[RMDB]
RNA sequence: GGGAACGACUCGAGUAGAGUCGAAAAGCUUCUCCUUCGUGCGGAGGCCUUUGGAAACAAAGGCGAAAGUCGGCCGAAUGUCCGAGGGUCGCGCGGGGAUAGACUACCCGAGAGGGGAAAACAACCCAAGAUCGCAUCCAUUCGUGGAUGCGAUCUUAAAAGAAACAACAACAACAAC
Reactivity to 2A3 in 0.01 (KOAc 150mM, MgCl2 10mM, bicine 150mM(pH8.5), 24C), signal-to-noise 1, nucleotides 027 to 126: g000c060u020u020c000u000c110c000u150u300c020g000u000g040c020g050g030a100g080g170c000c000u000u020u050g000g010a020a000a020c020a000a010a030g070g000c010g000a010a010a010g160u100c080g050g040c000c100g090a190a270u090g050u000c000c000g000a020g010g110g060u080c000g000c000g000c000g020g000g000g000a000u020a020g020a020c000u020a010c040c030c020g000a000g010a020g000g020g000g000a000a000a000a170c070a090a030c000c000c000
Notes: The record gives the reactivity of an RNA of 177 nucleotides to 2A3. Reactivities are given for positions 27 through 126. The 2A3 profile rests on 492 reads. The reactions ran in a buffer of 150 mM KOAc, 10 mM MgCl2 and 150 mM bicine (pH 8.5), at 24 C.